[RMDB]
Chemical mapping of a 177-nucleotide RNA with DMS and 2A3.
RNA sequence: GGGAACGACUCGAGUAGAGUCGAAAAUGGACGUACUGCAGCCCGCUGUCGAAUGGGGCGCGGUCAAGUUGGGCGAGUUCGCGCGCGACGUGUCCACGUUCGCCGGUGAAGUGCGCGACGCCGGGGGUGAUAACCACUUCUUCGGAAGUGGUUAUCAAAAAGAAACAACAACAACAAC
Reactivity to DMS in 0.01 (KOAc 150mM, MgCl2 10mM, bicine 150mM(pH8.5), 24C), signal-to-noise 5, nucleotides 027 to 126: u000g000g010a030c010g010u000a040c030u000g010c030a190g010c010c020c010g010c060u000g000u010c180g010a110a080u010g010g000g010g020c020g000c010g000g010u000c060a070a160g020u000u000g040g020g010c020g010a190g010u000u000c020g010c000g010c010g030c070g010a040c020g000u000g010u000c010c010a060c010g000u000u000c020g010c010c030g000g010u010g010a090a100g010u000g000c020g010c020g000a040c020g000c000c010g000g010g010g000g020
Reactivity to 2A3 in 0.01 (KOAc 150mM, MgCl2 10mM, bicine 150mM(pH8.5), 24C), signal-to-noise 3, nucleotides 027 to 126: u040g020g030a000c040g030u150a030c040u040g020c030a080g010c000c010c030g160c060u050g110u180c100g100a130a100u160g000g030g000g010c000g000c020g000g030u030c030a050a050g110u190u120g050g040g010c030g040a160g100u130u140c000g000c000g000c000g000c000g010a010c000g040u060g010u010c000c010a030c000g010u050u050c030g010c040c050g020g040u130g050a100a040g050u080g090c020g020c010g010a000c000g000c000c000g000g000g000g000g010